RNA sequence: GGGAACGACUCGAGUAGAGUCGAAAAUGUACAGACUCCAGAAGGUGGUCAUUCUUUGUUACUCCUAGAAGCUUGCUCGACGUGCUUUUUGGCUUCGGGAUCGUCUGCGAAGGGCAGCAUCGUCGCACUGAUACGGACUGUUCGCAGUCCGUAUCAGAAAAGAAACAACAACAACAAC
Reactivity to DMS in 0.01 (KOAc 150mM, MgCl2 10mM, bicine 150mM(pH8.5), 24C), signal-to-noise 1, nucleotides 027 to 126: u020g000u000a050c090a110g010a140c050u010c020c050a110g020a110a110g010g010u010g020g000u000c040a090u000u010c060u010u010u020g000u000u010a110c130u010c010c010u000a080g000a030a030g010c060u000u030g020c050u010c050g000a040c100g020u010g020c010u000u000u010u040u000g000g010c010u000u000c000g010g000g000a060u020c100g000u010c030u000g010c110g010a050a110g030g010g010c050a060g020c030a020u000c000g000u010c010g020c220a170
Reactivity to 2A3 in 0.01 (KOAc 150mM, MgCl2 10mM, bicine 150mM(pH8.5), 24C), signal-to-noise 1, nucleotides 027 to 126: u080g010u050a020c050a040g040a020c030u000c040c000a080g080a150a030g120g070u120g000g000u000c030a060u110u090c060u040u100u010g100u130u050a070c000u010c010c010u030a120g040a120a010g030c010u070u100g030c020u070c050g050a030c010g030u040g030c000u060u130u000u180u180g120g060c000u040u040c000g010g000g010a130u100c060g020u050c060u050g030c070g000a080a080g030g000g010c000a000g030c000a020u150c050g000u010c010g000c030a060